[RMDB]
This 177-nucleotide RNA was probed chemically with 2A3 and DMS. Values cover nucleotides 27 to 126. For 2A3, 1,176 sequencing reads were counted. It was measured as part of the RMDB libraries RFM100 and RFMREP. Conditions: 150 mM KOAc, 10 mM MgCl2 and 150 mM bicine (pH 8.5), 24 C. DMS adducts were read by reverse transcription with MarathonRT.

RNA sequence: GGGAACGACUCGAGUAGAGUCGAAAAAGGGUAAAAGCUAGCUUGACUGUGUUUCAGCCAAUAGGGAACGCAGAUGCGAAAGCAGGGCCUAACGAACCACCUAGUUCCCUCUUUAUGAGGGCAGGUGCGCCCUAGCACAUUUCGAUGUGCUAGGGCGAAAAGAAACAACAACAACAAC
Reactivity to 2A3 in 0.01 (KOAc 150mM, MgCl2 10mM, bicine 150mM(pH8.5), 24C), signal-to-noise 2, nucleotides 027 to 126: a000g050g000g000u110a110a110a060a000g050c060u080a000g030c000u030u050g060a090c000u030g060u000g040u050u020u000c000a010g040c050c010a120a110u100a220g020g040g030a000a000c000g000c010a000g000a080u100g090c000g130a300a000a000g000c000a000g010g130g000c000c000u030a010a000c060g000a010a000c020c000a030c000c000u000a010g000u160u240c000c140c010u010c020u030u160u090a280u280g000a000g000g000g000c000a000g000g030u020g060
Reactivity to DMS in 0.01 (KOAc 150mM, MgCl2 10mM, bicine 150mM(pH8.5), 24C), signal-to-noise 2, nucleotides 027 to 126: a080g030g010g030u000a050a020a080a130g030c000u010a090g000c050u000u000g010a270c000u010g000u000g040u020u000u050c010a100g010c300c090a030a090u030a230g050g020g010a000a000c060g030c000a010g000a050u020g020c120g020a050a050a040g000c000a100g000g000g010c030c000u010a070a080c090g000a050a130c300c010a030c000c040u000a150g000u000u030c000c010c000u000c000u000u020u050a110u070g000a010g000g000g000c110a000g000g020u000g010